[RMDB]
RNA sequence: GGGAACGACUCGAGUAGAGUCGAAAAAUUUAAAGGAGAAUGUGAACUAAGUGUAUUAGAAAUGGUUAAAGCCAUGAAUAGAGCUUUAGACGCCACAAGAAAAGAAUGAGAUAUGGAGGGUAAAUCAGACAAAUACGAACAAACAGCAGCGGAGGUAAUGGUGACUAUUAUUCGUAAUAGUCACCAUAAAAGAAACAACAACAACAAC
Reactivity to 2A3 in 0.01 (KOAc 150mM, MgCl2 10mM, bicine 150mM(pH8.5), 24C), signal-to-noise 2, nucleotides 027 to 156: a000u170u210u100a040a020a000g060g000a030g020a080a090u090g020u010g050a030a000c060u020a070a040g050u020g050u110a070u050u060a040g080a080a060a050u080g010g010u110u130a040a050a000g030c020c020a030u040g020a010a080u090a060g050a010g000c010u030u050u030a010g040a030c030g030c060c000a020c050a090a030g080a110a110a000a010g050a030a110u100g000a020g020a060u040a050u100g020g010a010g010g000g000u010a040a050a020u080c010a000g050a050c020a030a050a020u160a060c090g040a070a000c040a090a060a010c050a020g000c000a000g000c030g030g030a030g040g030u070a080
Reactivity to DMS in 0.01 (KOAc 150mM, MgCl2 10mM, bicine 150mM(pH8.5), 24C), signal-to-noise 1, nucleotides 027 to 156: a130u010u000u000a060a010a160g020g000a090g000a130a100u030g030u000g000a060a080c060u010a090a080g000u000g030u000a090u020u000a070g000a150a080a050u000g020g020u000u000a060a060a050g000c040c010a120u020g030a130a070u000a070g020a230g000c030u010u000u000a060g010a060c110g030c080c040a030c170a120a160g010a070a100a090a060g000a080a040u000g010a070g000a100u000a100u000g000g030a110g020g020g020u000a020a060a030u010c020a050g040a050c030a000a050a070u000a030c090g000a070a030c010a050a040a050c020a040g000c050a000g020c040g050g010a060g020g030u000a120